Chemical mapping of a 177-nucleotide RNA with DMS and 2A3.
Reactivities are given for positions 27 through 126.
The DMS profile rests on 11,883 reads.
It was measured as part of the RMDB library TTRDES.
RNA sequence: GGGAACGACUCGAGUAGAGUCGAAAAGAUAUGGACCUUGGAGGGAGCGUCGUGUCGGAAACGACACAGACGCUUUGAUCUCUUGGGUCCUAAGUCAAACUCAGACCCAGGUUCGCCUGGGUCUGAGGAUUAAGCGAUACUUCGGUAUCGCUUAAUCAAAAGAAACAACAACAACAAC
Reactivity to DMS in 0.01 (KOAc 150mM, MgCl2 10mM, bicine 150mM(pH8.5), 24C), signal-to-noise 4, nucleotides 027 to 126: g010a010u000a010u010g000g000a000c010c000u000u000g010g010a030g000g000g010a000g030c000g020u000c000g010u010g000u000c000g010g000a010a010a030c000g000a020c000a010c010a030g000a010c000g020c000u000u000u020g000a010u000c000u000c000u000u000g010g010g010u000c000c000u000a000a060g000u000c000a130a130a300c010u000c010a010g000a020c000c000c000a010g000g020u000u020c290g020c000c010u000g000g010g000u000c000u000g010a000g000
Reactivity to 2A3 in 0.01 (KOAc 150mM, MgCl2 10mM, bicine 150mM(pH8.5), 24C), signal-to-noise 2, nucleotides 027 to 126: g010a010u010a010u060g000g000a000c000c010u010u030g020g000a010g020g000g020a020g000c010g000u010c020g000u000g010u000c010g000g010a080a000a000c000g000a010c010a010c070a040g000a050c000g030c010u010u050u000g000a000u000c000u000c000u010u010g010g000g010u000c000c000u000a000a000g000u000c000a020a030a120c010u000c010a000g000a010c020c000c010a000g100g040u070u090c300g070c080c000u010g030g150g000u000c000u000g000a000g000

The RNA was probed in 150 mM KOAc, 10 mM MgCl2 and 150 mM bicine (pH 8.5) at 24 C.